RNA sequence: GGGAACGACUCGAGUAGAGUCGAAAAUCCUGGAGACAGGGCGACAUUGUCAAAUUGUUCGGGGACCACCUGUUAAAUUAUAUGCUACUGCAGCAGUGCUGAAAGGCCUGUGAGCACUGAGGGUAACGCCCUCAGGGAUGGUAAUAACGCAUAUAUACUUAAAUAAUGACUUCGGUCAUUAUUUAAGAAAAGAAACAACAACAACAAC
Reactivity to 2A3 in 0.01 (KOAc 150mM, MgCl2 10mM, bicine 150mM(pH8.5), 24C), signal-to-noise 3, nucleotides 027 to 156: u020c000c010u010g050g040a120g000a030c010a010g000g020g080c000g010a010c030a060u110u180g150u300c130a100a180a140u140u070g060u100u100c040g020g010g060g090a070c010c030a030c000c020u000g030u060u110a050a120a050u100u010a020u010a000u010g000c000u000a000c000u040g000c000a000g000c000a000g030u080g240c020u030g030a050a050a030g030g000c000c000u020g010u020g000a040g020c000a000c000u000g000a000g010g000g000u010a020a000c020g040c030c000c010u010c000a000g020g000g010a160u040g010g010u000a010a040u030a070a010c010g000c020a000u010a000u000a010u010a010
Reactivity to DMS in 0.01 (KOAc 150mM, MgCl2 10mM, bicine 150mM(pH8.5), 24C), signal-to-noise 2, nucleotides 027 to 156: u000c000c020u000g070g000a240g010a110c020a060g000g020g030c070g010a130c070a110u000u000g000u000c050a050a160a130u010u010g000u000u000c070g000g010g040g010a150c030c040a050c050c020u010g020u000u010a060a090a150u000u000a010u000a030u010g010c020u000a040c030u020g030c010a300g000c050a030g020u000g010c020u000g010a110a130a190g010g000c000c000u010g010u000g000a110g030c000a080c000u010g010a020g000g000g010u000a070a150c270g010c010c010c000u000c000a020g000g000g010a030u010g000g020u010a070a110u000a030a090c060g020c000a030u010a020u000a070u010a130